[RMDB]
RNA sequence: GGGAACGACUCGAGUAGAGUCGAAAAAACUCAUGAAUCUAAAAGAAUUGGGUUCUUUCGAUUUGGAGAACGUUAACGUGUAUCCUGGAGUAUGGAAUACAUACGAUAUCUUCGGUAUCGAGGCCGCGAAACGAUCCUGAUUCGUCAGGAUCGUUUCAAAAGAAACAACAACAACAAC
Reactivity to 2A3 in 0.01 (KOAc 150mM, MgCl2 10mM, bicine 150mM(pH8.5), 24C), signal-to-noise 2, nucleotides 027 to 126: a000a010c080u080c050a030u080g070a170a110u140c180u270a140a130a070a160g100a120a040u060u030g010g000g000u000u000c000u030u010u050c000g020a040u080u000u120g000g010a020g040a080a040c030g030u020u100a090a020c080g020u000g030u050a050u060c000c020u050g060g050a140g130u170a100u110g070g000a110a020u050a040c010a020u100a070c010g010a000u060a110u140c040u050u010c030g060g100u110a070u060c010g010a000g030g060c070c010g000c040
Reactivity to DMS in 0.01 (KOAc 150mM, MgCl2 10mM, bicine 150mM(pH8.5), 24C), signal-to-noise 2, nucleotides 027 to 126: a010a010c000u000c000a010u000g030a280a080u000c100u010a150a070a170a100g000a100a080u010u000g000g000g010u000u000c020u000u000u000c020g000a010u000u000u010g000g000a070g000a070a070c100g000u000u000a060a090c210g010u000g000u000a040u010c010c010u000g010g010a210g000u010a100u010g020g000a110a040u000a020c000a000u000a030c070g040a090u000a040u000c030u010u000c100g010g030u020a070u000c010g020a050g000g000c100c040g000c160